[RMDB]
Conditions: 150 mM KOAc, 10 mM MgCl2 and 150 mM bicine (pH 8.5), 24 C. Structure probing data (DMS and 2A3) for a 177-nucleotide construct. Reactivities are given for positions 27 through 126.
RNA sequence: GGGAACGACUCGAGUAGAGUCGAAAAGAUAUGGACGCAGAACUACAGCUUAUCAAUCGAAGAACCUCGGAUAGAUCGGAAACGAUCUAUCCGAGGGGAGAUUCUUAUGGCUGCUGCGUCCUAAGUCCUGUUUUAAUGACUUCGGUCAUUAAAACAGAAAAGAAACAACAACAACAAC
Reactivity to DMS in 0.01 (KOAc 150mM, MgCl2 10mM, bicine 150mM(pH8.5), 24C), signal-to-noise 1, nucleotides 027 to 126: g020a130u010a150u000g000g000a020c020g020c010a000g020a090a040c160u020a300c000a010g000c010u000u010a010u000c070a030a000u020c000g000a130a160g000a230a270c000c000u000c000g000g000a020u010a000g000a000u000c010g000g010a080a100a200c020g020a000u000c000u000a000u000c000c010g000a000g010g000g000g000a120g000a010u000u010c060u000u000a050u020g000g000c000u020g010c000u000g000c020g000u020c000c000u000a020a060g010u000c010
Reactivity to 2A3 in 0.01 (KOAc 150mM, MgCl2 10mM, bicine 150mM(pH8.5), 24C), signal-to-noise 1, nucleotides 027 to 126: g070a060u130a050u230g020g020a000c000g050c050a000g000a160a050c170u300a090c300a000g010c010u050u000a020u130c050a060a040u030c020g070a300a070g060a210a150c000c000u020c000g000g040a000u010a000g040a010u000c020g040g080a060a050a000c010g000a000u050c020u010a000u000c010c000g000a010g000g010g040g010a070g000a010u080u000c020u110u160a190u300g090g000c000u030g040c000u010g000c000g000u000c000c010u010a000a000g010u090c000
Background
For DMS the reverse transcriptase was MarathonRT. Reactivities are rounded to 0.1 and cut off at 0 and 3. For DMS, 1,462 sequencing reads were counted. For 2A3, 1,668 sequencing reads were counted.